The data come from the RNA Mapping Database (RMDB), library OK3TST. The record gives the reactivity of an RNA of 207 nucleotides to 2A3. Reactivities are given for positions 27 through 156. The 2A3 profile rests on 746 reads. The RNA was probed in 150 mM KOAc, 10 mM MgCl2 and 150 mM bicine (pH 8.5) at 24 C.
[RMDB]
RNA sequence: GGGAACGACUCGAGUAGAGUCGAAAACUUUUGAUUAGUAUUUACAUGGUAUAUCAUGUCAAAAACUGAAGUUUGCCAUGAAUUUCAUACAUAUUAGCAAUAGACAUGAGAUUUCCAUCUCUCCAUUGUAUCACUUAUUAAUAAAGAGUAACUGGGGGCUACUACUCAGUUUCGACUGAGUAGUAGCAAAAGAAACAACAACAACAAC
Reactivity to 2A3 in 0.01 (KOAc 150mM, MgCl2 10mM, bicine 150mM(pH8.5), 24C), signal-to-noise 2, nucleotides 027 to 156: c020u060u140u050u070g100a090u120u170a060g040u100a110u050u120u010a030c020a040u000g000g030u020a110u060a010u080c030a020u000g010u030c030a020a070a090a140a120c060u060g010a020a010g060u010u040u000g090c060c010a030u090g030a040a090u080u100u060c060a030u090a170c030a040u220a100u120u170a080g000c020a030a090u150a150g020a010c040a030u070g000a000g010a070u120u060u040c030c030a040u010c040u050c010u010c100c010a040u010u160g020u090a090u070c000a010c070u030u140a070u160u110a270a060u190a190a090a030g050a020g020u100a060a050c070u150g030g000g030g050